[RMDB]
RNA sequence: GGGAACGACUCGAGUAGAGUCGAAAAUAGCCAAAAGUACGCACAAUCGGCUCAAUAGCAAAGUUAUUCUCCUGUACCCCAAGCUCAAUGACAUUACGAUUGGUAGCAAAGUAAUCGGCUGUGGCAGUCUACUGUAGGGGUUCGCCCCUACAGUAGAAAAAGAAACAACAACAACAAC
Reactivity to DMS in 0.01 (KOAc 150mM, MgCl2 10mM, bicine 150mM(pH8.5), 24C), signal-to-noise 3, nucleotides 027 to 126: u010a110g010c000c020a040a070a120a160g030u020a060c100g040c170a080c040a070a090u000c050g030g000c030u020c040a070a100u000a060g020c050a070a060a050g010u020u000a090u000u000c000u000c020c050u010g000u010a130c070c020c010c030a070a090g020c060u020c080a060a050u000g010a070c120a090u000u000a130c090g010a050u000u000g000g000u000a140g000c050a060a090a080g010u010a080a070u000c090g010g010c000u020g010u010g010g000c040a130g000
Reactivity to 2A3 in 0.01 (KOAc 150mM, MgCl2 10mM, bicine 150mM(pH8.5), 24C), signal-to-noise 1, nucleotides 027 to 126: u020a000g030c000c000a010a000a000a140g060u040a020c080g030c020a020c000a040a140u070c010g030g000c040u010c030a090a160u080a090g060c080a080a050a010g030u080u080a070u230u000c000u030c000c010u000g070u160a180c000c000c000c000a000a060g010c000u000c050a000a180u110g010a020c040a100u010u210a070c030g090a080u020u040g050g050u050a030g000c040a060a090a020g010u010a060a030u020c050g040g000c000u030g000u020g080g000c020a020g040